[RMDB]
The record gives the reactivity of an RNA of 177 nucleotides to DMS. The reactions ran in a buffer of 150 mM KOAc, 10 mM MgCl2 and 150 mM bicine (pH 8.5), at 24 C. The DMS profile rests on 820 reads. Values cover nucleotides 27 to 126. Source: RMDB library OK2TRN, as collected in RNAgym.
RNA sequence: GGGAACGACUCGAGUAGAGUCGAAAAUAUCACUAAAAAAUUUACAGCCAUCAGUGUCUAACGCCGACGGCCCUCUUGUUUGGCCCCACAAGCCAGGUGGGAAGCUCUGUACCAGAGAAAUGAGAUGUCUGAUACCAGAAUUCGUUCUGGUAUCAGAAAAAGAAACAACAACAACAAC
Reactivity to DMS in 0.01 (KOAc 150mM, MgCl2 10mM, bicine 150mM(pH8.5), 24C), signal-to-noise 1, nucleotides 027 to 126: u010a070u010c070a170c060u010a000a080a150a050a090a110u020u010u000a090c140a060g010c010c020a040u000c030a070g000u000g020u000c060u020a070a010c120g010c070c010g000a060c040g000g000c050c040c020u010c050u000u010g010u000u020u000g010g020c050c010c030c040a050c090a030a150g000c040c040a030g000g000u020g040g000g020a080a110g010c040u000c020u010g040u000a090c060c020a100g020a060g020a070a030a110u000g000a120g010a070u000g020